Record summary: The data come from the RNA Mapping Database (RMDB), library OK3TST. Structure probing data (DMS and 2A3) for a 207-nucleotide construct.
RNA sequence: GGGAACGACUCGAGUAGAGUCGAAAAGUCUCUGCCCCUAUGGCCAUACAGUCACUAAUAAUCUCAAUAGUGCGGUAUUUUGGUCCUCCGAAUCAUGACGCAAAGUAAUAGUGAUAGUAGUAGUCAAGAAUAUACUGUAGAGUAAUUUGUGACUCCAGAUCACUACUCAUUUCGAUGAGUAGUGAUCAAAAGAAACAACAACAACAAC
Reactivity to DMS in 0.01 (KOAc 150mM, MgCl2 10mM, bicine 150mM(pH8.5), 24C), signal-to-noise 2, nucleotides 027 to 156: g030u000c050u010c010u010g020c000c010c020c050u000a130u020g040g030c010c020a170u000a070c030a140g000u000c000a040c030u000a050a100u000a100a090u000c070u000c120a090a200u000a130g030u000g030c000g000g030u000a060u000u000u000u000g030g030u000c050c100u020c070c040g030a100a040u000c050a090u000g010a110c050g000c030a050a040a110g000u000a060a090u010a050g020u000g000a030u000a140g000u000a070g000u000a060g030u000c020a090a110g020a060a120u010a120u000a050c050u000g010u000a100g010a120g010u000a090a110u000u000u010g020u000g000a190c000u010c010c020a300
Reactivity to 2A3 in 0.01 (KOAc 150mM, MgCl2 10mM, bicine 150mM(pH8.5), 24C), signal-to-noise 3, nucleotides 027 to 156: g050u020c060u020c040u130g050c010c000c020c020u100a090u070g040g000c050c010a040u070a100c080a070g050u030c000a010c010u040a020a070u150a140a190u070c030u010c060a070a120u070a150g120u060g010c050g010g010u050a050u030u060u030u090g030g010u090c000c010u000c000c010g090a100a090u050c040a050u030g060a020c040g040c190a140a080a110g000u120a140a040u080a090g010u020g000a010u010a060g050u000a000g010u000a000g010u020c000a010a030g050a070a020u130a000u020a120c020u020g020u100a020g000a000g040u040a030a060u010u010u020g060u010g020a010c000u000c000c010a010
As a SHAPE reagent, 2A3 marks flexible, mostly unpaired nucleotides at the ribose 2'-OH. DMS adducts were read by reverse transcription with MarathonRT. For 2A3 the reverse transcriptase was SuperScript II with manganese. Conditions: 150 mM KOAc, 10 mM MgCl2 and 150 mM bicine (pH 8.5), 24 C.